[RMDB]
RNA sequence: GGGAACGACUCGAGUAGAGUCGAAAAGGCUGGUGGGAGCCGGUGUCGUCGGGACGCUGUUCCUGAAUCGAGACCGGGAGUCCAUCGACGACAAGUACCUCGCCGCCUUGAGGCGGUCCGGACUCACGGGUAUGCGCAGUUUCGACUGCGCAUACCCAAAAGAAACAACAACAACAAC
Reactivity to 2A3 in 0.01 (KOAc 150mM, MgCl2 10mM, bicine 150mM(pH8.5), 24C), signal-to-noise 2, nucleotides 027 to 126: g080g020c160u130g020g020u000g000g130g000a070g150c010c000g060g060u120g230u000c010g000u000c000g000g000g000a020c000g120c300u080g120u080u040c000c000u010g060a020a050u260c060g050a000g030a120c000c000g000g000g000a050g060u000c000c000a000u090c000g000a000c030g000a000c010a110a060g000u170a160c000c040u040c040g090c000c100g030c010c010u180u230g090a200g030g010c020g110g000u000c000c010g040g000a070c060u030c040a140c000